Structure probing data (DMS and 2A3) for a 177-nucleotide construct. The data come from the RNA Mapping Database (RMDB), library OK2TST. The reactions ran in a buffer of 150 mM KOAc, 10 mM MgCl2 and 150 mM bicine (pH 8.5), at 24 C.

[RMDB]
RNA sequence: GGGAACGACUCGAGUAGAGUCGAAAAGAAGCGGUCAGGUCCGAAGCUACCGACGGGAUGCUGAAGAUUCAGUUCUCGGCACAAAUUGGCAUAGAUAAGAGUGACAAUCAUGACUACACGAAGAUAAGAAGUACAGAUGUUUCGACAUCUGUACUUCAAAAGAAACAACAACAACAAC
Reactivity to DMS in 0.01 (KOAc 150mM, MgCl2 10mM, bicine 150mM(pH8.5), 24C), signal-to-noise 3, nucleotides 027 to 126: g010a140a050g020c070g010g020u010c040a060g010g010u010c060c010g000a140a110g010c040u000a100c050c030g010a080c060g030g000g030a080u010g000c030u000g000a070a060g010a070u020u000c170a050g000u000u000c010u000c010g010g000c040a060c080a040a040a140u000u000g000g000c050a040u010a060g000a120u010a130a100g000a160g020u000g010a040c050a030a070u000c090a080u010g020a060c090u010a070c140a060c110g000a080a070g010a060u000a060a130
Reactivity to 2A3 in 0.01 (KOAc 150mM, MgCl2 10mM, bicine 150mM(pH8.5), 24C), signal-to-noise 2, nucleotides 027 to 126: g040a000a000g030c040g020g070u070c070a040g000g010u030c000c020g040a050a010g030c020u050a030c010c040g040a020c010g000g010g000a030u110g000c010u010g050a100a050g060a290u140u010c010a020g080u040u030c010u010c000g040g010c010a010c030a090a120a020u100u050g030g000c020a050u050a050g080a050u120a140a110g080a000g040u090g020a030c010a020a040u040c030a040u070g040a050c030u100a020c070a010c100g050a040a010g060a100u150a120a040